[RMDB]
RNA sequence: GGGAACGACUCGAGUAGAGUCGAAAAUGAACUGUAAAAAGUGAUAGUCUUGUACACGUAAGAAUAUUAAUCGUAGUAGUAUCCUGAGUACCACGGAGCACGUGAAAUUCUGUGGGAAUCUGUCAGAUACAAAAAUUGUAUUCGUACAAUUUUUGUAAAAAGAAACAACAACAACAAC
Reactivity to 2A3 in 0.01 (KOAc 150mM, MgCl2 10mM, bicine 150mM(pH8.5), 24C), signal-to-noise 7, nucleotides 027 to 126: u100g010a030a020c020u030g020u130a050a030a010a040a070g060u060g060a060u050a040g060u010c020u020u070g060u070a020c030a010c060g060u070a040a030g070a150a030u140a070u210u200a110a120u100c040g000u030a060g010u010a010g010u010a080u060c010c000u010g010a010g020u040a020c000c000a000c000g010g000a010g010c060a020c280g110u160g130a020a030a050u060u000c000u000g010u000g010g000g000a020a020u010c000u010g060u020c020a010g010a080
Reactivity to DMS in 0.01 (KOAc 150mM, MgCl2 10mM, bicine 150mM(pH8.5), 24C), signal-to-noise 8, nucleotides 027 to 126: u030g000a130a060c040u000g000u020a050a090a120a120a050g000u000g000a070u000a050g000u000c020u000u000g010u010a050c130a040c150g000u000a070a070g010a060a040u020a050u010u010a060a070u010c060g010u010a110g000u010a060g000u000a050u000c020c000u010g010a050g000u010a220c000c010a010c010g010g000a030g010c120a080c190g010u020g010a080a060a090u010u000c000u000g010u000g000g010g000a090a100u010c040u010g010u010c080a060g010a250
This 177-nucleotide RNA was probed chemically with 2A3 and DMS. The reactions ran in a buffer of 150 mM KOAc, 10 mM MgCl2 and 150 mM bicine (pH 8.5), at 24 C. For 2A3 the reverse transcriptase was SuperScript II with manganese. The data come from the RNA Mapping Database (RMDB), libraries RFM100 and RFMREP.